[RMDB]
RNA sequence: GGGAACGACUCGAGUAGAGUCGAAAACUUUUUGGACAUGUGAUCUGAGGUGAGUUAUGUGUGACAAGUGAGGCUAAGCUAAUAUCACUGAAGUCAUGAGUAUGUCACAAUAAACGGAGAUUACCGGGUCGGAUGUGAUGUUCGCAUCACAUCCGACAAAAGAAACAACAACAACAAC
Reactivity to 2A3 in 0.01 (KOAc 150mM, MgCl2 10mM, bicine 150mM(pH8.5), 24C), signal-to-noise 1, nucleotides 027 to 126: c000u110u070u000u080u160g040g000a020c020a000u100g040u070g030a100u130c030u020g030a000g100g000u010g020a040g030u000u040a110u230g090u000g000u040g020a020c000a110a140g090u010g240a130g010g000c070u020a040a000g080c000u010a050a000u050a060u110c030a000c010u000g020a040a000g020u040c030a020u020g000a000g100u100a050u030g000u000c020a010c000a280a060u080a000a060a040c030g000g010a100g030a080u110u110a070c020c000g050g100
Reactivity to DMS in 0.01 (KOAc 150mM, MgCl2 10mM, bicine 150mM(pH8.5), 24C), signal-to-noise 1, nucleotides 027 to 126: c040u010u000u000u000u000g010g010a040c020a090u030g040u000g020a040u010c030u000g040a300g000g030u020g010a080g000u000u000a010u000g050u000g000u010g020a050c080a020a090g020u000g000a120g000g000c030u000a120a190g020c030u000a130a060u010a110u010c020a030c040u000g010a260a080g000u020c020a030u000g010a150g080u010a090u000g000u000c000a070c030a070a050u010a030a060a090c050g010g000a170g000a090u000u000a070c010c020g010g000